The record gives the reactivity of an RNA of 177 nucleotides to DMS. The reactions ran in a buffer of 150 mM KOAc, 10 mM MgCl2 and 150 mM bicine (pH 8.5), at 24 C. Values cover nucleotides 27 to 126. It was measured as part of the RMDB library TTRINS.

RNA sequence: GGGAACGACUCGAGUAGAGUCGAAAAGAUAUGGACGUCUGCUUCGCUUGGAUUUAGGAGUGUGGCUAGUAUGUCGGAAACGACAUACGAAGCCACACUCCUUGUCAGCGAACAGACGUCCUAAGUCCAUUUAGUUUUACUUCGGUAAAACUAAAUGAAAAGAAACAACAACAACAAC
Reactivity to DMS in 0.01 (KOAc 150mM, MgCl2 10mM, bicine 150mM(pH8.5), 24C), signal-to-noise 4, nucleotides 027 to 126: g000a090u000a300u010g000g010a010c000g020u000c000u000g020c280u000u000c010g010c000u010u000g030g010a020u000u010u010a020g020g000a020g040u010g040u000g000g030c000u010a270g010u010a000u000g000u000c020g010g000a100a120a250c000g010a020c000a010u010a010c000g000a120a170g000c010c000a000c000a000c000u000c000c000u000u000g010u000c010a020g000c000g010a010a040c000a000g000a000c000g000u010c000c000u000a010a070g010u000c050